[RMDB]
RNA sequence: GGGAACGACUCGAGUAGAGUCGAAAACAAAGAAAGUACUGCUCUUGAAGCAGUGGCGGCCAGACAACCGUUGAGAUAGAUCCACAGAUGAACAACCUUUCUGUUGCUUGUCUACUAAUUCUAUCUCGUCCAGUCAUUAGUUCGCUAAUGACUGGACAAAAGAAACAACAACAACAAC
Reactivity to DMS in 0.01 (KOAc 150mM, MgCl2 10mM, bicine 150mM(pH8.5), 24C), signal-to-noise 4, nucleotides 027 to 126: c090a110a090a120g020a090a090a160g000u020a030c000u000g020c000u010c060u040u000g000a120a020g030c000a000g010u000g000g010c050g010g010c170c060a140g040a110c180a060a090c050c060g030u000u000g010a000g000a000u020a000g000a010u000c250c300a150c180a010g030a020u000g040a000a000c020a010a050c010c240u020u030u060c160u000g000u000u010g020c050u000u000g000u010c000u000a040c130u010a130a090u020u000c000u000a000u000c020u000c040
Reactivity to 2A3 in 0.01 (KOAc 150mM, MgCl2 10mM, bicine 150mM(pH8.5), 24C), signal-to-noise 7, nucleotides 027 to 126: c040a010a110a030g180a060a100a010g090u100a030c010u010g020c000u020c050u210u300g130a180a000g000c000a000g000u010g010g010c000g000g000c010c020a100g040a120c030a040a030c020c020g040u060u120g000a000g000a010u010a010g010a010u050c070c020a030c030a050g000a000u020g010a040a020c000a000a020c010c030u170u300u160c140u180g010u000u000g010c020u010u020g000u000c010u010a030c060u050a060a080u090u000c000u000a010u000c000u000c010